Source: RMDB libraries RFM100 and RFMREP, as collected in RNAgym. Structure probing data (2A3 and DMS) for a 177-nucleotide construct. For DMS the reverse transcriptase was MarathonRT.
[RMDB]
RNA sequence: GGGAACGACUCGAGUAGAGUCGAAAAGGUCCGCUAUUCGACCACAUGCCUUUUGGAGAUGAUCAUGGCCGGGCCGGGGAAGCGAAGAGCUUCCAAGAUUUGUGUCAGUCCUGCCGCGAGAGCGAGAGAACUACAUUGAGUUCGCUCAAUGUAGUUCAAAAGAAACAACAACAACAAC
Reactivity to 2A3 in 0.01 (KOAc 150mM, MgCl2 10mM, bicine 150mM(pH8.5), 24C), signal-to-noise 8, nucleotides 027 to 126: g030g000u010c010c020g000c030u060a080u050u150c070g020a020c020c030a030c030a080u240g060c020c000u140u190u110u300g100g020a120g030a120u100g010a020u040c030a030u050g030g000c070c030g020g020g000c000c000g000g040g020g000a010a000g000c020g020a100a040g030a110g100c000u000u000c000c000a010a010g050a020u100u130u180g110u040g030u040c010a020g030u000c010c000u020g020c020c010g010c010g020a070g000a020g080c030g000a070g000a010
Reactivity to DMS in 0.01 (KOAc 150mM, MgCl2 10mM, bicine 150mM(pH8.5), 24C), signal-to-noise 6, nucleotides 027 to 126: g000g000u000c010c030g020c060u000a040u010u020c140g020a040c040c020a060c060a100u050g010c010c010u000u010u020u010g010g020a080g020a090u020g000a080u010c020a070u010g000g010c030c030g030g000g010c010c010g030g010g010g020a010a010g000c010g000a110a110g000a280g000c000u000u010c010c000a090a070g010a090u010u010u000g020u020g000u000c070a100g000u000c030c010u010g020c040c010g020c030g000a100g010a100g010c030g000a130g010a180